[RMDB]
RNA sequence: GGGAACGACUCGAGUAGAGUCGAAAAACUGACGGUACGCCGUCAGAACGGUAGAAAAGAUGGUUGGAAAACCACGCCUUCUACCAAUAUAGUAAAUAAAUAGGCGGAGCGGUCAUACGUGACCGCAAAAACAUCCUUGGCUUCGGCCAAGGAUGAACUCGUACUUAAUCUUCGGAUUAAGUACGAGAAAAGAAACAACAACAACAAC
Reactivity to 2A3 in 0.01 (KOAc 150mM, MgCl2 10mM, bicine 150mM(pH8.5), 24C), signal-to-noise 3, nucleotides 027 to 156: a010c000u000g000a000c000g010g000u040a040c220g040c040c000g000u000c000a000g000a040a000c030g000g030u000a000g030a000a020a010a000g080a230u010g000g030u060u030g000g110a050a140a010a000c000c000a010c000g000c000c000u010u030c000u000a000c000c000a010a000u100a010u030a040g090u040a010a050a180u080a020a040a030u120a020g010g010c040g020g000a020g000c000g020g020u000c010a010u050a080c200g070u030g000a000c020c000g000c000a000a000a000a000a050c000a000u000c010c000u000u000g000g000c000u030u080c200g100g000c000c000a000a000g010g010a010u000g000a020a000